[RMDB]
RNA sequence: GGGAACGACUCGAGUAGAGUCGAAAAAAAGAUAUGGAGGUAAGGGAGAUAGGUUAGCCGAAGAACGCAUUCGGAAACGAAUGCGGGAGGCUAAUACCUAUCGAAGAACUUACCUCCUAAGUCAAAACCAUUGACACUACUUCGGUAGUGUCAAUGGAAAAGAAACAACAACAACAAC
Reactivity to DMS in 0.01 (KOAc 150mM, MgCl2 10mM, bicine 150mM(pH8.5), 24C), signal-to-noise 1, nucleotides 027 to 126: a060a050a020g000a020u000a300u000g000g000a000g000g000u000a000a060g020g000g000a130g020a010u000a000g000g020u000u000a010g000c000c000g000a050a270g020a230a220c020g000c000a000u000u010c000g020g000a110a110a260c000g090a010a000u000g000c000g030g000g000a020g000g010c000u000a020a000u000a050c040c000u000a000u000c000g000a080a160g000a140a150c000u000u000a000c000c000u000c000c000u000a000a090g000u000c080a160a070a170a130
Structure probing data (DMS) for a 177-nucleotide construct. Values cover nucleotides 27 to 126. The data come from the RNA Mapping Database (RMDB), library TTRDES. For DMS the reverse transcriptase was MarathonRT.